[RMDB]
RNA sequence: GGGAACGACUCGAGUAGAGUCGAAAAGAUAUGGAUGACAGCUAGCUACUAUUCGGAAACGAAUACUAGCUUGGACCUGUAUCCUAAGUCAAAUCGCUGAAGUUAUCUUCGGAUAACUUCAGCGAAACAAACAUACGUUGUUCGCAACGUAUGUUUGAAAAGAAACAACAACAACAAC
Reactivity to DMS in 0.01 (KOAc 150mM, MgCl2 10mM, bicine 150mM(pH8.5), 24C), signal-to-noise 6, nucleotides 027 to 126: g000a030u000a300u000g000g000a010u010g020a040c020a020g010c020u000a010g010c010u000a010c130u000a000u000u000c000g000g010a080a080a160c000g000a020a000u000a020c110u000a000g010c000u000u010g010g000a090c300c010u000g010u000a050u000c000c000u000a050a150g010u000c030a080a090a140u000c000g010c000u000g010a010a010g010u000u000a000u000c000u000u010c220g000g000a010u000a000a010c000u000u000c000a000g020c000g000a000a020a100
Reactivity to 2A3 in 0.01 (KOAc 150mM, MgCl2 10mM, bicine 150mM(pH8.5), 24C), signal-to-noise 2, nucleotides 027 to 126: g050a020u070a010u170g020g000a020u050g170a030c010a010g030c020u020a000g000c010u010a010c010u000a010u000u010c010g010g030a090a060a040c000g000a000a000u000a010c000u000a000g000c030u010u050g010g070a070c020c000u000g020u020a010u010c000c000u030a160a020g060u040c050a050a030a190u040c000g000c000u000g000a000a010g010u010u000a000u000c020u050u130c300g060g000a000u000a010a000c000u000u000c010a010g000c000g000a000a000a000